[RMDB]
RNA sequence: GGGAACGACUCGAGUAGAGUCGAAAAAUGAGAUCCCAUCUUGCACACUGUGCUAAUUUGAGAUUCUCAUGCCUCCUACUUGGAGAAAUCUGGACUAGAAGUCAGGGCAUCUGACUCUGCCAGCCACAAAACGUACAAGGCUUCGGCCUUGUACGAACAACUAUUAUCAGUUCGCUGAUAAUAGUUGAAAAGAAACAACAACAACAAC
Reactivity to DMS in 0.01 (KOAc 150mM, MgCl2 10mM, bicine 150mM(pH8.5), 24C), signal-to-noise 3, nucleotides 027 to 156: a030u010g010a010g020a060u010c000c000c000a020u000c070u010u000g000c020a030c030a220c140u010g010u000g020c000u000a020a030u000u010u020g000a010g010a060u010u000c000u000c000a010u000g000c100c050u010c010c020u000a100c130u000u010g020g010a150g000a060a070a070u010c010u000g010g010a100c060u000a090g010a110a070g020u000c010a040g010g020g030c220a100u010c020u000g000a040c010u000c020u010g000c010c010a050g000c050c040a090c080a070a070a090a140c020g030u000a000c000a020a010g020g010c010u000u000c300g050g020c010c000u000u000g010u000a020c000g000a020a050
Reactivity to 2A3 in 0.01 (KOAc 150mM, MgCl2 10mM, bicine 150mM(pH8.5), 24C), signal-to-noise 9, nucleotides 027 to 156: a000u010g000a000g010a010u000c010c000c000a010u010c010u010u030g000c000a020c030a100c210u300g010u020g020c070u110a040a050u010u010u020g030a040g000a030u300u050c000u000c010a010u050g040c000c010u020c000c010u090a220c110u100u230g050g000a040g050a060a070a060u050c000u000g010g050a110c050u090a110g030a160a010g110u000c000a000g040g050g190c070a160u130c100u000g000a000c000u000c000u010g000c000c000a020g040c030c010a110c040a030a110a070a030c000g000u000a000c000a000a000g000g000c000u040u150c190g040g000c000c000u000u000g000u000a000c000g000a000a000
Structure probing data (DMS and 2A3) for a 207-nucleotide construct. DMS (dimethyl sulfate) methylates the pairing face of unpaired adenines and cytosines. 2A3 adducts were read by reverse transcription with SuperScript II with manganese. For 2A3, 15,585 sequencing reads were counted. The DMS profile rests on 9,333 reads.